[RMDB]
RNA sequence: GGGAACGACUCGAGUAGAGUCGAAAAGAUAAAGAAGGGUUCUCCCAAGCACUUAGAGAGUUUGCUGUUUUACAUGAUAGUGUUGCAGCACCAUUAGAAUACCUCGGUAAAGCUUUAGUAUACCAACGAGAACUAGUGUAUUCGUACACUAGUUCUCAAAAGAAACAACAACAACAAC
Reactivity to 2A3 in 0.01 (KOAc 150mM, MgCl2 10mM, bicine 150mM(pH8.5), 24C), signal-to-noise 5, nucleotides 027 to 126: g010a040u160a070a090a030g110a050a080g070g000g020u110u010c040u010c030c010c020a000a040g020c010a030c070u110u150a020g030a000g010a020g130u040u140u120g030c000u000g050u050u160u140u080a010c020a000u090g140a230u280a160g050u010g010u030u030g000c010a010g000c000a010c030c000a130u080u110a000g030a040a040u110a140c010c010u030c030g000g050u060a080a080a020g010c000u060u040u050a030g010u070a050u030a080c030c020a050a040c090
Reactivity to DMS in 0.01 (KOAc 150mM, MgCl2 10mM, bicine 150mM(pH8.5), 24C), signal-to-noise 5, nucleotides 027 to 126: g010a140u000a040a120a090g000a110a090g000g010g000u010u000c080u000c030c020c040a140a110g000c090a060c070u000u000a070g000a090g000a090g010u000u000u010g010c010u000g000u000u010u000u010a040c030a070u000g000a120u010a100g020u000g010u000u000g010c040a030g000c010a050c190c100a090u000u010a070g000a090a080u000a050c030c030u000c050g010g010u010a070a070a100g000c020u000u000u010a070g020u000a120u000a130c030c030a080a110c240